[RMDB]
RNA sequence: GGGAACGACUCGAGUAGAGUCGAAAAUGAACUGAUGAGCGUCGCCGCGAUUGAGACGCGCCGCAGCAUACUGCUCACCGGCUGGUGUGUACUGGCAGCGAUCGUGCUGGCGCUGGUGAUAGCGGUGUGCAGGGAUCGGAUUCGUCCGAUCCCUGCAAAAAGAAACAACAACAACAAC
Reactivity to DMS in 0.01 (KOAc 150mM, MgCl2 10mM, bicine 150mM(pH8.5), 24C), signal-to-noise 1, nucleotides 027 to 126: u010g030a080a140c070u000g010a100u020g000a220g010c030g020u010c020g010c070c050g000c010g020a120u000u040g000a170g020a050c110g040c000g000c040c030g020c170a130g010c050a000u010a030c020u000g010c050u000c000a000c100c030g000g000c040u040g010g000u000g010u000g060u030a110c070u000g000g050c000a020g010c080g000a060u010c100g020u000g000c030u000g020g000c040g010c020u000g030g000u000g000a020u000a020g000c000g000g000u010g000
Reactivity to 2A3 in 0.01 (KOAc 150mM, MgCl2 10mM, bicine 150mM(pH8.5), 24C), signal-to-noise 2, nucleotides 027 to 126: u120g030a050a040c030u090g030a040u200g000a100g000c040g030u100c040g000c000c030g000c050g090a100u040u250g060a010g010a080c000g000c000g010c000c030g010c010a080g000c000a010u020a010c010u030g010c030u000c030a020c000c000g160g000c090u100g030g060u070g060u060g060u120a120c060u070g070g000c030a040g010c020g090a080u170c050g040u040g080c000u080g020g020c000g010c060u030g010g010u050g060a050u010a070g000c020g000g000u030g000